RNA sequence: GGGAACGACUCGAGUAGAGUCGAAAAGAAGGAGAUGAAAGCGACUUUAGAAUCGGCUAACUGAGCAGCCAGAUCCAGACGGCAAGUAUCGUCGCCAGAGAUACAGUCGCAACUAGCCGUAGGAGAAGCGACUAAUCAUGUUCGCAUGAUUAGUCGCAAAAGAAACAACAACAACAAC
Reactivity to 2A3 in 0.01 (KOAc 150mM, MgCl2 10mM, bicine 150mM(pH8.5), 24C), signal-to-noise 3, nucleotides 027 to 126: g170a070a010g060g100a020g000a060u140g110a010a050a000g050c010g040a070c000u070u090u100a090g040a120a130u090c000g020g010c000u050a080a030c020u080g040a020g060c100a000g010c010c010a020g000a050u000c050c030a020g010a070c010g000g000c040a080a070g030u040a110u090c080g090u040c030g020c020c010a050g050a000g000a050u070a040c030a000g050u040c000g000c030a010a030c000u020a000g070c010c010g010u040a020g030g070a060g020a050a020
Reactivity to DMS in 0.01 (KOAc 150mM, MgCl2 10mM, bicine 150mM(pH8.5), 24C), signal-to-noise 2, nucleotides 027 to 126: g000a000a110g030g010a090g020a040u020g000a100a100a070g020c000g010a140c020u030u000u010a010g000a180a170u000c060g000g020c010u000a030a080c080u000g000a080g020c040a060g030c030c030a120g000a080u000c060c070a110g000a120c080g020g000c020a100a150g000u060a020u000c020g000u030c090g000c060c040a040g000a130g000a060u020a060c070a050g010u000c060g030c110a060a120c040u000a000g000c000c000g010u000a120g020g020a030g020a120a060
This 177-nucleotide RNA was probed chemically with 2A3 and DMS. Values cover nucleotides 27 to 126. As a SHAPE reagent, 2A3 marks flexible, mostly unpaired nucleotides at the ribose 2'-OH. The 2A3 profile rests on 2,059 reads. In probing experiments dimethyl sulfate is read out at A N1 and C N3, which are open when not base-paired. For DMS the reverse transcriptase was MarathonRT. The RNA was probed in 150 mM KOAc, 10 mM MgCl2 and 150 mM bicine (pH 8.5) at 24 C. For DMS, 2,303 sequencing reads were counted.